[RMDB]
RNA sequence: GGGAACGACUCGAGUAGAGUCGAAAAUUUAAUGGUCAGAAUGCCAGACUGAAGAUCUGGAGAUCGGGGUUCAAUUCCCCGUCGCGGAGCCUUUGCGGAUUUAGCUCAGUUGGGAGAGCGCCCGCUUGUCGCGUGGGAGGUCCUGUGUUCGAUCCACCACUAUGGACCAGUUCGCUGGUCCAUAGUGAAAAGAAACAACAACAACAAC
Reactivity to DMS in 0.01 (KOAc 150mM, MgCl2 10mM, bicine 150mM(pH8.5), 24C), signal-to-noise 2, nucleotides 027 to 156: u000u000u010a070a110u010g000g030u000c040a080g010a090a100u000g010c000c020a050g000a070c020u020g000a100a110g020a300u000c000u020g000g000a200g010a070u010c040g030g000g020g050u010u000c100a100a300u000u010c010c010c010c030g040u000c030g020c050g020g000a120g000c050c030u000u000u000g020c080g000g000a150u010u020u010a120g010c050u000c020a140g000u000u020g020g000g020a150g000a080g030c020g020c090c000c020g050c020u000u000g030u000c070g030c030g030u000g000g020g000a110g030g000u010c020c000u000g020u000g020u020u000c050g010a160u000c010c020a140c160
Reactivity to 2A3 in 0.01 (KOAc 150mM, MgCl2 10mM, bicine 150mM(pH8.5), 24C), signal-to-noise 2, nucleotides 027 to 156: u120u150u140a050a010u070g020g020u030c010a000g030a130a050u070g070c000c000a020g010a030c050u120g090a140a040g050a230u010c000u040g050g030a060g020a100u130c030g020g000g000g000u000u100c050a010a030u110u060c050c010c000c020g000u000c010g000c010g030g060a030g010c030c000u070u110u150g000c030g020g020a020u100u100u210a020g000c010u000c030a060g050u110u070g070g010g000a070g000a000g010c040g000c010c000c000g050c000u010u060g090u070c020g000c030g000u000g030g010g000a070g000g000u050c020c000u060g000u010g030u030u070c000g020a030u030c010c000a030c050